An RNA of 207 nucleotides, treated with DMS and 2A3 and read out base by base.
Values are in units of 0.01, from 0 to 300, in steps of 10.
The DMS profile rests on 3,135 reads.
2A3 adducts were read by reverse transcription with SuperScript II with manganese.
RNA sequence: GGGAACGACUCGAGUAGAGUCGAAAAUCGAAAUCAUCGGGAGUGAUCCAGAUGACAGUCCUGCCAUGAGACCGCAACGAGAGCAUGUCGCAUCGAAUGGACUCGGGGAGUCGGCAGCUUGCCCCACUAAGGCAGACGUUGUUCGCAACGUCUGCAAGAGAUAAACAUACUUCGGUAUGUUUAUCUCAAAAGAAACAACAACAACAAC
Reactivity to DMS in 0.01 (KOAc 150mM, MgCl2 10mM, bicine 150mM(pH8.5), 24C), signal-to-noise 2, nucleotides 027 to 156: u000c060g010a090a110a100u010c020a020u000c000g010g030g020a080g040u000g010a280u000c010c000a070g000a030u000g000a020c030a070g020u010c030c000u010g000c160c030a040u000g010a110g010a030c070c100g050c010a090a230c130g000a120g000a180g030c060a080u000g010u000c040g030c060a110u000c050g000a140a210u000g000g000a090c030u000c040g010g000g020g000a110g040u000c000g000g000c080a270g000c050u000u000g020c030c040c010c010a080c110u030a030a190g040g010c000a000g000a020c000g010u010u000g020u000u010c200g000c000a030a010c000g010u000c010u000g020c030a050a020
Reactivity to 2A3 in 0.01 (KOAc 150mM, MgCl2 10mM, bicine 150mM(pH8.5), 24C), signal-to-noise 5, nucleotides 027 to 156: u080c010g010a010a010a030u030c020a000u020c010g030g030g000a040g040u120g050a070u020c010c010a040g010a030u030g020a030c010a000g040u030c010c000u010g010c020c010a080u100g010a020g030a080c020c050g030c080a060a080c120g070a040g000a030g150c040a050u150g070u110c030g000c040a050u060c060g030a040a050u060g030g030a030c010u010c050g020g000g020g000a040g040u050c020g010g020c010a030g020c060u080u140g050c000c020c000c010a050c070u090a070a080g110g000c000a000g000a000c000g000u010u000g020u020u050c080g010c110a000a000c000g000u000c000u000g000c000a000a000